This 207-nucleotide RNA was probed chemically with DMS and 2A3. The RNA was probed in 150 mM KOAc, 10 mM MgCl2 and 150 mM bicine (pH 8.5) at 24 C. DMS adducts were read by reverse transcription with MarathonRT. The 2A3 profile rests on 2,920 reads.

[RMDB]
RNA sequence: GGGAACGACUCGAGUAGAGUCGAAAAUGAGCCAUGUGACCCUAGCGAAGGCCCGGGUUACUUGUCUCCUAAAGUGGGGGGCAAUGCGUGAGGCUGGUUUCACAGAGCAGCGACAACCUCCCGCUCCUGGCAGUGGAAGGAUAACAGGCUGUUGUCACAUAAACAUUUCGUUCGCGAAAUGUUUAUGAAAAGAAACAACAACAACAAC
Reactivity to DMS in 0.01 (KOAc 150mM, MgCl2 10mM, bicine 150mM(pH8.5), 24C), signal-to-noise 2, nucleotides 027 to 156: u010g000a060g000c020c000a160u000g000u000g010a050c030c000c010u000a080g020c020g020a220a170g020g030c010c010c150g020g020g030u000u010a020c010u010u010g000u000c030u000c010c060u000a060a050a090g020u010g010g010g020g020g040g010c020a000a070u010g010c020g020u010g030a200g000g040c010u000g000g000u000u010u000c150a160c050a080g020a080g020c010a160g020c040g000a100c030a110a050c000c000u000c020c010c010g020c000u000c010c010u000g000g010c020a090g020u010g000g020a060a040g010g000a150u000a060a060c040a110g040g020c000u000g010u010u000g000u000c020a160
Reactivity to 2A3 in 0.01 (KOAc 150mM, MgCl2 10mM, bicine 150mM(pH8.5), 24C), signal-to-noise 3, nucleotides 027 to 156: u150g000a000g020c010c000a030u020g000u010g010a000c000c000c010u020a030g000c030g210a270a030g220g020c020c040c030g020g000g000u010u010a010c000u000u010g010u030c010u020c010c000u140a230a110a010g030u070g020g000g000g000g000g000c000a010a010u040g000c010g040u060g010a060g030g020c010u010g030g030u080u270u230c170a200c000a030g010a020g030c020a000g000c010g050a130c140a250a300c020c000u010c000c000c000g000c010u010c000c010u040g040g000c040a020g020u020g040g040a060a060g020g020a030u030a160a100c040a060g050g000c040u010g000u020u020g030u030c010a010